[RMDB]
Structure probing data (2A3) for a 207-nucleotide construct.
Source: RMDB library RNAMAK, as collected in RNAgym.
Conditions: 150 mM KOAc, 10 mM MgCl2 and 150 mM bicine (pH 8.5), 24 C.

RNA sequence: GGGAACGACUCGAGUAGAGUCGAAAAGGGGUCUCGUGUGGCACCGCUAACAGCUUGGAUUUAUGUGGCUGAAGCCUCCACGGCCACAUUGUCAGCUGGACCCGGUGCCCACGAGACGGAGGCACCCAAAACGCCCUGGGCUUCGGCCCAGGGCGAAUCGUUACAUGUUGUUCGCAACAUGUAACGAAAAAGAAACAACAACAACAAC
Reactivity to 2A3 in 0.01 (KOAc 150mM, MgCl2 10mM, bicine 150mM(pH8.5), 24C), signal-to-noise 1, nucleotides 027 to 156: g050g010g010g000u010c010u010c020g010u020g070u280g000g000c010a000c000c000g000c000u050a080a010c000a000g080c010u270u300g180g000a120u270u300u140a040u140g020u000g010g000c010u030g040a110a000g060c010c020u000c010c000a030c010g000g000c000c000a000c000a010u040u030g000u020c030a020g020c000u000g000g010a030c020c000c000g000g010u020g000c000c000c010a000c000g020a000g010a000c000g000g000a010g020g000c020a070c000c000c000a090a060a020a020c010g000c000c000c000u010g000g030g020c000u060u160c300g060g010c000c000c000a010g000g000g000c000g000a000a010